[RMDB]
Source: RMDB library TTRINS, as collected in RNAgym. Chemical mapping of a 177-nucleotide RNA with DMS. The reactions ran in a buffer of 150 mM KOAc, 10 mM MgCl2 and 150 mM bicine (pH 8.5), at 24 C. In probing experiments dimethyl sulfate is read out at A N1 and C N3, which are open when not base-paired.

RNA sequence: GGGAACGACUCGAGUAGAGUCGAAAAGAUAUGGACCAUGUACAGGAUAGUCGCAGUCCCACAGAGGGAGAUCGGAAACGAUCUCCUCCCCACCUGUGGGACUGAACUACGACCUUGGUCCUAAGUCCACACUACGGACGUUCGCGUCCGUAGUGUGAAAAGAAACAACAACAACAAC
Reactivity to DMS in 0.01 (KOAc 150mM, MgCl2 10mM, bicine 150mM(pH8.5), 24C), signal-to-noise 1, nucleotides 027 to 126: g000a100u000a300u050g010g000a030c000c000a040u000g030u000a190c240a140g000g000a250u000a020g020u000c130g080c000a000g000u000c000c000c000a000c040a010g000a130g000g040g000a000g020a000u000c000g000g060a090a120a160c000g060a020u000c000u000c000c010u000c150c040c030c030a300c090c000u000g040u000g000g030g000a000c000u000g000a000a060c010u000a030c030g000a180c040c020u010u000g020g030u010c000c000u020a030a080g010u080c020